An RNA of 177 nucleotides, treated with DMS and 2A3 and read out base by base.
The reactions ran in a buffer of 150 mM KOAc, 10 mM MgCl2 and 150 mM bicine (pH 8.5), at 24 C.
For 2A3 the reverse transcriptase was SuperScript II with manganese.
For DMS, 19,959 sequencing reads were counted.

[RMDB]
RNA sequence: GGGAACGACUCGAGUAGAGUCGAAAAACCGCCGCUGUACGUCCUCGAGCGUCUCGUCGCUGCCGACGGCGACGUAGCUCGGGCCCGUGCCGGACAGCGAGACGCCGUCGACGUCCGGCAUGGCGGUAUGAUGGGAUAAUUUCGAUUAUCCCAUCAUAAAAGAAACAACAACAACAAC
Reactivity to DMS in 0.01 (KOAc 150mM, MgCl2 10mM, bicine 150mM(pH8.5), 24C), signal-to-noise 5, nucleotides 027 to 126: a080c000c010g010c010c010g030c030u010g000u000a030c050g010u000c040c010u010c000g000a100g010c000g000u010c060u010c030g000u020c090g010c090u010g010c060c050g000a080c030g000g000c030g000a050c040g020u010a120g020c120u000c060g000g010g010c120c040c010g010u010g010c130c000g020g010a080c030a110g010c010g000a030g000a060c030g040c040c020g010u000c300g000a020c020g000u000c010c000g000g010c000a030u040g020g010c000g000g000u010
Reactivity to 2A3 in 0.01 (KOAc 150mM, MgCl2 10mM, bicine 150mM(pH8.5), 24C), signal-to-noise 9, nucleotides 027 to 126: a000c000c000g000c000c000g010c020u030g020u060a020c020g020u020c010c010u040c020g040a070g020c010g070u020c020u010c050g230u090c060g020c070u050g040c030c040g060a100c030g030g020c020g010a030c020g050u070a050g010c060u030c010g010g040g000c010c000c000g030u040g090c060c010g010g000a050c010a010g020c010g010a010g010a040c040g050c060c030g020u020c000g010a040c000g000u010c010c000g010g000c000a020u130g000g000c000g000g000u010